[RMDB]
RNA sequence: GGGAACGACUCGAGUAGAGUCGAAAAGAUAUGGAACUUACUUCCGCGCAACAGCUUACUCGGAAACGAGUAAGACAUGCGUGAGUACUGGUUCCUAAGUCAAAAGAUAAUGAGUUCGCUCAUUAUCCAUAUAAAUGUCCUUCGGGACAUUUAUAUGAAAAGAAACAACAACAACAAC
Reactivity to 2A3 in 0.01 (KOAc 150mM, MgCl2 10mM, bicine 150mM(pH8.5), 24C), signal-to-noise 6, nucleotides 027 to 126: g030a010u090a070u210g000g010a000a010c010u030u010a010c010u220u130c150c020g000c010g000c020a050a170c030a280g040c010u000u000a000c000u000c000g040g010a050a090a060c010g010a000g000u010a000a000g010a020c000a060u110g000c000g010u030g010a020g010u020a080c210u130g080g000u000u000c000c000u000a150a010g070u040c050a020a020a060a200g010a010u010a010a010u020g020a000g050u060u190c300g090c160u000c000a000u010u000a000u000c020
Reactivity to DMS in 0.01 (KOAc 150mM, MgCl2 10mM, bicine 150mM(pH8.5), 24C), signal-to-noise 9, nucleotides 027 to 126: g000a050u000a300u010g000g010a010a000c000u010u000a020c020u010u010c210c060g030c010g010c070a070a110c300a190g000c000u000u000a000c000u000c000g010g000a120a100a200c000g010a020g000u000a010a000g000a030c120a120u010g010c010g040u000g010a050g010u000a020c300u010g010g000u000u000c000c000u010a060a180g010u010c040a080a090a110a140g010a010u000a000a010u000g000a010g000u000u010c300g020c010u000c000a000u000u000a000u000c000
The record gives the reactivity of an RNA of 177 nucleotides to 2A3 and DMS.
It was measured as part of the RMDB library TTRDES.
2A3 adducts were read by reverse transcription with SuperScript II with manganese.
The DMS profile rests on 16,864 reads.
Conditions: 150 mM KOAc, 10 mM MgCl2 and 150 mM bicine (pH 8.5), 24 C.